About this RNA
Source: RMDB library M2RFPK, as collected in RNAgym. Chemical mapping of a 207-nucleotide RNA with DMS and 2A3. 2A3 adducts were read by reverse transcription with SuperScript II with manganese. Reactivities are given for positions 27 through 156. The 2A3 profile rests on 4,073 reads.

RNA sequence: GGGAACGACUCGAGUAGAGUCGAAAAGCUUAAUAACCUGCGCUGAGCUCUUCUCCCCCAGCUUGCCUGUGUCCUAGGGAAUUGGAAGGUCAUCCUUCACAGGAUCGUGUGGAAGUCCUGCUCGGGGUCCAAACAUGGUAAUUCGUUACCAUGUUAAGACCUAAGUUAUAUUCGUAUAACUUAGGUCAAAAGAAACAACAACAACAAC
Reactivity to DMS in 0.01 (KOAc 150mM, MgCl2 10mM, bicine 150mM(pH8.5), 24C), signal-to-noise 3, nucleotides 027 to 156: g000c020u010u000a060a090u010a070a090c020c040u010g010c040g030c060u000g010a080g010c020u000c040u000u000c040u010c020c020c010c020c020a130g020c030u000u010g010c010c010u000g000u000g030u010c030c040u000a140g020g020g010a100a100u000u000g010g010a080a080g000g020u020c070a120u000c010c010u010u010c090a060c040a040g010g010a030u010c040g010u000g000u010g030g020a130a120g010u010c010c020u000g010c040u010c040g050g020g040g020u000c030c030a090a020a020c010a000u010g000g030u000a000a070u000u010c300g010u000u000a000c000c000a010u020g010u000u000a050a140
Reactivity to 2A3 in 0.01 (KOAc 150mM, MgCl2 10mM, bicine 150mM(pH8.5), 24C), signal-to-noise 4, nucleotides 027 to 156: g000c010u110u090a080a030u090a180a180c000c020u060g030c050g000c070u110g060a050g020c010u000c060u220u080c070u100c000c020c000c000c000a000g010c030u050u110g050c030c000u060g020u030g030u090c030c050u040a040g000g020g070a060a070u100u060g030g010a060a030g000g000u070c040a090u120c010c000u020u030c030a010c010a040g030g000a040u060c060g030u060g000u050g140g020a040a030g040u020c010c030u020g000c010u020c030g000g000g000g010u020c040c020a000a010a020c000a000u000g000g010u010a030a040u050u030c020g010u010u010a010c000c000a000u000g000u000u010a000a020